An RNA of 177 nucleotides, treated with DMS and 2A3 and read out base by base. 2A3 adducts were read by reverse transcription with SuperScript II with manganese. For DMS the reverse transcriptase was MarathonRT. Conditions: 150 mM KOAc, 10 mM MgCl2 and 150 mM bicine (pH 8.5), 24 C.
RNA sequence: GGGAACGACUCGAGUAGAGUCGAAAAGAAGAGAAGUGAGUAAACGCCUAUACGGUAUAAGCACAGCCCGUCAAAAGGCGUGCGGCGAGGGCACCGGACGCUGUGCUUAUAACUGGGCCAUCGAAGAAUAUCCUCAUGACUUCGGUCAUGAGGAUAUAAAAGAAACAACAACAACAAC
Reactivity to DMS in 0.01 (KOAc 150mM, MgCl2 10mM, bicine 150mM(pH8.5), 24C), signal-to-noise 3, nucleotides 027 to 126: g000a080a110g010a090g030a060a120g010u010g010a110g010u020a030a060a130c170g000c000c010u020a150u030a090c050g000g000u000a010u010a000a000g030c010a020c000a020g000c040c120c070g020u010c080a100a070a120a060g000g000c150g000u000g000c000g020g000c120g000a120g010g030g000c010a040c000c040g010g000a050c050g000c000u010g010u000g000c020u010u000a010u000a000a020c040u000g000g010g000c020c090a030u030c130g000a080a130g030a070
Reactivity to 2A3 in 0.01 (KOAc 150mM, MgCl2 10mM, bicine 150mM(pH8.5), 24C), signal-to-noise 3, nucleotides 027 to 126: g090a050a000g140a000g070a120a040g060u120g070a010g010u130a090a070a020c060g000c000c000u080a060u030a110c110g030g010u000a000u000a030a000g010c010a000c000a000g010c020c050c030g000u020c060a000a190a060a000g190g040c080g020u030g010c020g020g020c130g040a120g040g120g000c010a010c020c000g030g010a000c020g010c000u000g000u000g000c000u000u030a010u010a020a020c010u040g020g010g000c030c030a040u070c050g040a090a030g050a070